[RMDB]
RNA sequence: GGGAACGACUCGAGUAGAGUCGAAAAAGCUUCGUACUUUGUUAUGAUGCUCACCAUAUCUUAUAACAAACUAAUUGAUAGUUUGCCUAUAGAUUUGAUGUUUAAUUAAGAUAGGCAUGCUCACCUACAAGUAGUUACUGUUCGCAGUAACUACUUGAAAAGAAACAACAACAACAAC
Reactivity to DMS in 0.01 (KOAc 150mM, MgCl2 10mM, bicine 150mM(pH8.5), 24C), signal-to-noise 4, nucleotides 027 to 126: a020g010c000u000u000c030g020u000a030c040u010u010u000g010u000u000a020u000g000a050u010g000c030u000c050a090c030c010a030u010a030u000c010u000u000a050u000a060a100c020a010a020a020c040u000a020a210u010u000g010a140u010a010g010u000u000u000g010c130c040u000a070u010a020g000a060u000u010u000g010a050u000g000u010u010u010a070a090u000u010a060a080g000a090u000a010g000g000c030a050u000g000c070u000c060a110c030c010u000a090
Reactivity to 2A3 in 0.01 (KOAc 150mM, MgCl2 10mM, bicine 150mM(pH8.5), 24C), signal-to-noise 2, nucleotides 027 to 126: a000g000c000u000u000c000g000u000a040c030u120u140u150g030u090u010a000u030g000a000u010g000c010u020c010a040c000c000a020u010a000u010c030u050u170a070u040a100a020c050a050a030a010c020u080a060a020u060u040g090a050u030a030g000u020u030u020g010c010c010u010a010u010a010g080a080u010u020u120g020a040u070g040u050u140u060a090a030u050u020a020a010g030a040u010a010g000g010c010a010u010g000c000u000c020a060c010c020u030a040
An RNA of 177 nucleotides, treated with DMS and 2A3 and read out base by base. For 2A3 the reverse transcriptase was SuperScript II with manganese. The DMS profile rests on 4,599 reads. DMS adducts were read by reverse transcription with MarathonRT. Source: RMDB library OK2TRN, as collected in RNAgym. High 2A3 reactivity points to a flexible backbone, as in loops and unpaired stretches. For 2A3, 2,214 sequencing reads were counted.